[RMDB]
RNA sequence: GGGAACGACUCGAGUAGAGUCGAAAAGAUAUGGAGUGAGAGCUUUUGACGCCUUUCUGGGUCGGAAACGACCCGAAGGGCGAUAAGCUCCCUCCUAAGUCAAAACAGGAAAGUUCGCUUUCCUGAACUUAGAGAAUAGCUUCGGCUAUUCUCUAAGAAAAGAAACAACAACAACAAC
Reactivity to 2A3 in 0.01 (KOAc 150mM, MgCl2 10mM, bicine 150mM(pH8.5), 24C), signal-to-noise 4, nucleotides 027 to 126: g030a020u070a060u200g020g010a010g030u120g080a300g010a010g140c020u120u070u130u160g210a180c070g000c010c000u020u020u010c230u300g000g000g000u000c010g010g030a080a040a060c010g000a000c030c010c000g000a000a000g000g000g000c000g010a000u000a000a000g000c000u000c010c010c000u000c000c000u010a080a000g000u000c030a020a030a080a180c010a010g010g010a010a000a010g030u100u150c300g030c170u000u010u020c000c000u000g000a030a010
Reactivity to DMS in 0.01 (KOAc 150mM, MgCl2 10mM, bicine 150mM(pH8.5), 24C), signal-to-noise 4, nucleotides 027 to 126: g010a040u010a300u000g000g010a020g010u000g020a130g020a030g000c000u000u000u000u000g020a210c050g020c000c000u000u000u010c000u020g060g000g010u000c010g010g000a100a050a200c010g010a010c000c000c010g000a000a000g000g010g020c000g000a010u000a000a010g000c000u000c000c010c000u000c000c000u000a010a070g000u010c040a080a080a130a260c000a010g000g000a020a010a010g010u010u010c240g000c010u000u000u000c000c000u000g000a020a080